[RMDB]
The record gives the reactivity of an RNA of 177 nucleotides to DMS and 2A3.
2A3 is a SHAPE reagent: it acylates the 2'-hydroxyl of flexible nucleotides of all four kinds.
It was measured as part of the RMDB library TTRDEL.
Conditions: 150 mM KOAc, 10 mM MgCl2 and 150 mM bicine (pH 8.5), 24 C.
The DMS profile rests on 2,568 reads.
RNA sequence: GGGAACGACUCGAGUAGAGUCGAAAAGAUAUGGAAAAGGCGUUGAAACAUUCAUCGGAAACGAUGACUGUGUGGAGCCUUUUCCUAAGUCAAAACUAUCUCAAUUAGUUCGCUAAUUGAGAUAGAACCUCUGGUUUAUGUUCGCAUAAACCAGAGGAAAAGAAACAACAACAACAAC
Reactivity to DMS in 0.01 (KOAc 150mM, MgCl2 10mM, bicine 150mM(pH8.5), 24C), signal-to-noise 2, nucleotides 027 to 126: g000a020u010a090u000g000g010a010a000a000a000g000g020c000g020u030u020g010a200a090a040c000a010u000u000c000a000u000c000g010g000a060a060a050c000g000a010u000g000a000c190u000g010u010g020u030g010g020a250g000c000c000u000u000u000u000c000c000u000a010a070g000u000c020a070a090a080a180c000u000a010u000c000u000c000a010a000u000u000a000g000u000u010c260g020c000u010a000a020u000u000g010a000g010a010u000a000g000a080a140
Reactivity to 2A3 in 0.01 (KOAc 150mM, MgCl2 10mM, bicine 150mM(pH8.5), 24C), signal-to-noise 2, nucleotides 027 to 126: g010a010u010a000u050g000g040a050a000a000a020g000g020c100g200u300u300g290a300a300a000c000a010u020u010c000a000u010c010g010g000a020a010a000c000g010a000u000g010a000c020u010g010u030g040u240g140g020a000g000c000c020u020u000u000u000c000c000u000a010a010g000u020c020a000a000a060a100c010u000a010u020c000u000c000a010a000u020u010a010g030u090u080c260g010c170u010a010a000u000u000g010a000g000a000u000a000g010a010a020